RNA sequence: GGGAACGACUCGAGUAGAGUCGAAAACAUGGGCCAACUUCCGAACGAAGAUACGCGGGGGGCAGGAUCAGCGCCCGAGAGGGGAUAAAUGGCAAAGAGCGGAGGAACGUCGGAGGAAACCCCCCAACAAGUGAUAUAAGUUCGCUUAUAUCACUUGAAAAGAAACAACAACAACAAC
Reactivity to DMS in 0.01 (KOAc 150mM, MgCl2 10mM, bicine 150mM(pH8.5), 24C), signal-to-noise 3, nucleotides 027 to 126: c130a050u010g000g000g000c030c060a100a150c030u000u010c010c030g000a100a080c100g010a090a070g000a150u000a070c080g020c070g010g020g020g000g010g010c050a030g010g000a060u010c090a050g020c100g010c050c010c020g000a100g000a090g000g000g000g000a070u010a020a060a100u000g020g010c070a060a080a060g000a080g010c070g000g010a130g010g010a120a080c090g000u000c030g010g020a040g000g020a070a120a170c010c000c000c000c000c030a060a120
Reactivity to 2A3 in 0.01 (KOAc 150mM, MgCl2 10mM, bicine 150mM(pH8.5), 24C), signal-to-noise 1, nucleotides 027 to 126: c020a110u130g000g000g040c000c020a020a020c030u060u040c000c030g030a120a050c040g060a110a040g070a090u130a120c110g040c060g090g000g000g000g060g000c020a010g060g050a040u060c040a010g060c040g020c020c000c000g030a020g040a010g000g020g010g000a010u070a070a110a030u080g050g000c020a080a040a040g050a020g030c090g000g050a020g010g000a060a020c020g020u030c030g000g000a010g020g020a040a060a010c010c000c000c010c010c000a010a020